[RMDB]
RNA sequence: GGGAACGACUCGAGUAGAGUCGAAAACAGAUCCACAGCGUGAGCGUGUGCGGCAGAUGUGGAGCAAGGGAGGAGAAGGACAAGAAACUCCCCAGACAGAUACCAAGCGCUCUGUCUCACGUAGUCAUGCGUAAUAUGAGUUCGCUCAUAUUACGCAAAAAGAAACAACAACAACAAC
Reactivity to 2A3 in 0.01 (KOAc 150mM, MgCl2 10mM, bicine 150mM(pH8.5), 24C), signal-to-noise 6, nucleotides 027 to 126: c050a020g070a090u060c040c010a030c050a060g050c010g020u010g000a040g000c030g010u050g020u010g030c010g070g000c040a030g030a140u110g060u050g100g030a060g080c060a080a090g040g020g020a070g050g050a060g080a160a140g130g090a090c050a080a060g080a100a090a020c010u000c000c000c000c020a020g050a050c000a030g050a020u100a120c050c030a090a050g010c010g010c030u000c040u040g090u020c000u010c000a010c030g020u050a040g040u060c050a080
Reactivity to DMS in 0.01 (KOAc 150mM, MgCl2 10mM, bicine 150mM(pH8.5), 24C), signal-to-noise 5, nucleotides 027 to 126: c300a120g050a120u000c020c020a130c070a120g010c010g010u010g020a090g000c040g000u030g010u040g030c090g000g030c100a070g000a120u010g010u010g000g010a130g000c170a140a220g010g000g000a000g030g000a110g030a190a150g000g020a120c210a130a080g000a100a150a100c050u010c010c010c010c060a120g000a100c080a030g000a070u010a060c040c020a190a170g000c040g000c080u010c010u040g010u030c000u000c020a030c060g020u010a110g000u040c070a140
The record gives the reactivity of an RNA of 177 nucleotides to 2A3 and DMS. The data come from the RNA Mapping Database (RMDB), library OK1LIB. 2A3 adducts were read by reverse transcription with SuperScript II with manganese. For 2A3, 6,349 sequencing reads were counted. The reactions ran in a buffer of 150 mM KOAc, 10 mM MgCl2 and 150 mM bicine (pH 8.5), at 24 C. The DMS profile rests on 6,785 reads.